[RMDB]
RNA sequence: GGGAACGACUCGAGUAGAGUCGAAAAAGGGUUCGACGUUUCUACUGGACUCCGAAGCGCAUGCCAAGAUUGUAGUAAUUCUUGUAAAACAUACUACAAAAAAAAUAGUUGCAAAUAACGACAACUACGCUUUAGCAGCUUAAUGCUAACCGAUGCAGCUAGGGUUCAUGUUCGCAUGAACCCUAGCAAAAGAAACAACAACAACAAC
Reactivity to 2A3 in 0.01 (KOAc 150mM, MgCl2 10mM, bicine 150mM(pH8.5), 24C), signal-to-noise 1, nucleotides 027 to 156: a000g110g050g000u040u010c050g050a080c000g050u000u000u040c030u000a010c050u080g080g000a030c020u020c080c000g000a020a080g070c030g060c050a040u130g020c020c000a020a040g030a120u010u110g000u000a000g000u000a000a230u160u050c080u030u150g150u210a000a130a000a000c010a020u000a020c020u030a000c000a000a020a020a020a020a000a020a020u050a010g000u000u020g010c010a100a110a200u150a210a040c070g110a090c010a020a000c020u110a050c050g030c060u020u090u070a000g000c020a020g020c000u090u210a110a010u140g000c000u020a000a000c050c060g040a020u080g050c070a060